[RMDB]
RNA sequence: GGGAACGACUCGAGUAGAGUCGAAAAAGCAGGCAGCAGGGCUGGAGUGGGAAUUCCUCCAGUCUCUUCCCCAAAGCCCUUCCAAGUUGCCACUCAGUCAAACUACCGCUCUCAUCACAUAAAAAUGCCCUUCUCUUGGAAAUGUGCUUGCCAUCAACAUUUACUGACCAUUCGUGGUCAGUAAAUGAAAAGAAACAACAACAACAAC
Reactivity to 2A3 in 0.01 (KOAc 150mM, MgCl2 10mM, bicine 150mM(pH8.5), 24C), signal-to-noise 4, nucleotides 027 to 156: a010g060c040a040g040g000c000a020g010c000a020g020g020g000c020u020g010g020a020g010u260g040g100g070a100a120u220u140c060c000u000c000c050a010g020u000c040u030c020u030u020c030c000c010c000a040a070a040g000c010c000c000u040u040c020c010a060a030g020u020u050g040c020c000a050c040u080c020a010g040u040c040a070a040a090c060u090a100c020c040g030c010u020c020u020c030a090u060c020a060c010a090u230a090a100a050a080a040u130g010c010c000c000u080u030c050u010c000u030u020g050g000a010a080a070u100g050u080g020c030u060u040g020c010c000a070u110c030a040a050
Reactivity to DMS in 0.01 (KOAc 150mM, MgCl2 10mM, bicine 150mM(pH8.5), 24C), signal-to-noise 2, nucleotides 027 to 156: a100g020c080a090g020g050c030a040g040c060a100g010g010g030c020u010g000g000a060g000u000g010g010g010a210a260u000u030c050c000u010c020c020a030g010u000c010u000c020u000u000c020c000c020c050a090a140a200g030c020c010c000u000u000c030c010a060a220g040u000u010g020c060c040a100c030u000c030a080g030u010c070a060a060a070c020u000a090c030c020g000c010u000c040u000c030a080u010c070a070c050a100u000a050a060a040a080a070u010g000c010c010c020u000u000c010u000c030u000u000g010g000a050a060a140u000g040u000g020c000u000u010g010c000c020a180u000c020a020a230
Structure probing data (2A3 and DMS) for a 207-nucleotide construct. Source: RMDB library OK3TST, as collected in RNAgym. Conditions: 150 mM KOAc, 10 mM MgCl2 and 150 mM bicine (pH 8.5), 24 C. For 2A3, 2,335 sequencing reads were counted.